[RMDB]
RNA sequence: GGGAACGACUCGAGUAGAGUCGAAAAGUGAGGGUGUCACGAUCCAACAGCACCUUUUGGCUUGCCAGCGUAGAGACGGGCGCUGUCAUGAAGGAAUGUUGAGGCGCCGUCGGCUAGAGCUAGUAACAGUAUACUCCCUAUUCGUAGGGAGUAUACUAAAAGAAACAACAACAACAAC
Reactivity to DMS in 0.01 (KOAc 150mM, MgCl2 10mM, bicine 150mM(pH8.5), 24C), signal-to-noise 9, nucleotides 027 to 126: g020u000g000a110g010g000g020u000g000u000c020a050c040g000a170u000c030c030a110a100c170a100g000c030a040c010c010u000u000u000u000g010g010c080u000u000g010c080c040a030g010c030g010u010a050g020a250g000a030c020g010g010g010c010g020c020u010g000u000c020a030u010g000a150a120g020g020a110a080u010g010u000u000g010a300g000g000c010g010c000c000g000u000c010g000g010c010u000a050g010a080g010c020u000a030g000u000a040a090c200
Reactivity to 2A3 in 0.01 (KOAc 150mM, MgCl2 10mM, bicine 150mM(pH8.5), 24C), signal-to-noise 5, nucleotides 027 to 126: g060u040g020a100g010g030g010u030g040u050c020a000c050g020a020u040c010c010a030a030c020a030g010c000a030c000c000u040u040u050u120g050g000c010u010u030g020c020c030a020g010c040g070u130a060g030a010g000a140c070g070g060g090c000g020c020u060g240u120c010a020u060g100a100a080g170g120a240a060u120g060u110u110g150a070g030g000c000g000c000c000g000u000c000g020g020c000u030a030g000a010g070c030u020a010g030u050a060a060c030